RNA sequence: GGGAACGACUCGAGUAGAGUCGAAAAAACGGAGGAGCGCGAAGGUGGGCUCAGCCCGGUUGGCAACCGGGUGUCGAGUGCAUGGGCAUAAGCCCGCCUAACUGUGAGACCAACAAGUCGAGCAGAUUUACCCACUGAGUUUCGACUCAGUGGGUAAAAAAGAAACAACAACAACAAC
Reactivity to 2A3 in 0.01 (KOAc 150mM, MgCl2 10mM, bicine 150mM(pH8.5), 24C), signal-to-noise 1, nucleotides 027 to 126: a030a000c080g030g010a040g000g040a070g010c030g000c060g110a050a020g030g000u010g010g040g000c000u010c040a010g010c000c000c020g040g040u020u030g020g000c090a080a030c000c010g000g000g020u090g050u050c070g030a040g000u040g020c050a130u200g020g080g000c030a060u070a130a030g000c010c000c000g010c000c000u050a130a030c000u000g010u030g040a000g010a000c000c020a040a110c030a180a050g010u000c000g000a020g000c000a000g000a010u050
Reactivity to DMS in 0.01 (KOAc 150mM, MgCl2 10mM, bicine 150mM(pH8.5), 24C), signal-to-noise 4, nucleotides 027 to 126: a040a090c070g010g030a030g000g020a010g020c020g040c100g010a070a040g000g010u000g000g010g000c020u000c070a200g000c000c000c000g000g000u000u010g000g000c100a160a260c010c020g020g000g010u000g010u020c110g020a120g010u000g020c040a120u030g010g040g020c000a050u000a150a090g000c000c000c030g030c000c000u000a080a080c020u010g000u000g010a300g000a010c000c030a060a140c300a090a190g020u010c000g000a300g000c010a000g000a240u020
Conditions: 150 mM KOAc, 10 mM MgCl2 and 150 mM bicine (pH 8.5), 24 C. Structure probing data (2A3 and DMS) for a 177-nucleotide construct. It was measured as part of the RMDB libraries RFM100 and RFMREP. Reactivities are rounded to 0.1 and cut off at 0 and 3. For 2A3, 1,605 sequencing reads were counted.